[RMDB]
RNA sequence: GGGAACGACUCGAGUAGAGUCGAAAAAUACAAGGGGAGGUUUCGGCCAAAUGUUGUAUGCAGAAAGCGUGAGGAAGGUAGCACUUAGACACUCACGAGUAGCGGUUCGACAGUAGUGCUAAAAUGAGACAGUACGAAAAGUUCGCUUUUCGUACAAGAGAUAAUAUCUGUUCGCAGAUAUUAUCUCAAAAGAAACAACAACAACAAC
Reactivity to 2A3 in 0.01 (KOAc 150mM, MgCl2 10mM, bicine 150mM(pH8.5), 24C), signal-to-noise 6, nucleotides 027 to 156: a000u150a030c040a050a060g000g010g010g010a040g010g020u030u040u130c060g060g000c020c020a030a070a060u080g000u020u020g020u040a060u090g030c010a010g080a070a080a010g050c040g020u020g010a010g020g030a070a020g050g000u050a020g020c010a010c040u050u040a030g040a060c020a010c070u020c010a030c030g010a020g040u070a020g020c040g000g050u080u060c010g030a020c010a030g070u130a010g000u030g030c020u060a030a050a030a100u090g000a040g020a040c070a070g010u000a000c000g000a010a000a000a000g030u040u060c110g040c070u010u000u000u000c000g000u000a000c000a000a010
Reactivity to DMS in 0.01 (KOAc 150mM, MgCl2 10mM, bicine 150mM(pH8.5), 24C), signal-to-noise 4, nucleotides 027 to 156: a080u010a090c030a070a100g000g010g000g030a100g020g010u000u000u000c050g010g030c020c030a040a080a110u010g010u000u000g010u000a090u010g000c030a130g010a070a070a090g020c040g010u000g000a040g020g030a070a090g020g040u000a060g010c040a050c050u010u000a100g020a100c060a080c020u000c040a080c040g010a110g020u000a060g000c020g020g030u000u000c020g010a090c040a120g000u000a030g010u000g010c020u000a030a040a070a100u000g010a150g010a110c080a090g010u000a010c010g000a000a010a020a020g020u000u000c300g030c000u000u000u000u000c000g010u000a010c020a020a100
Source information
Structure probing data (2A3 and DMS) for a 207-nucleotide construct. The reactions ran in a buffer of 150 mM KOAc, 10 mM MgCl2 and 150 mM bicine (pH 8.5), at 24 C. For 2A3 the reverse transcriptase was SuperScript II with manganese. As a SHAPE reagent, 2A3 marks flexible, mostly unpaired nucleotides at the ribose 2'-OH.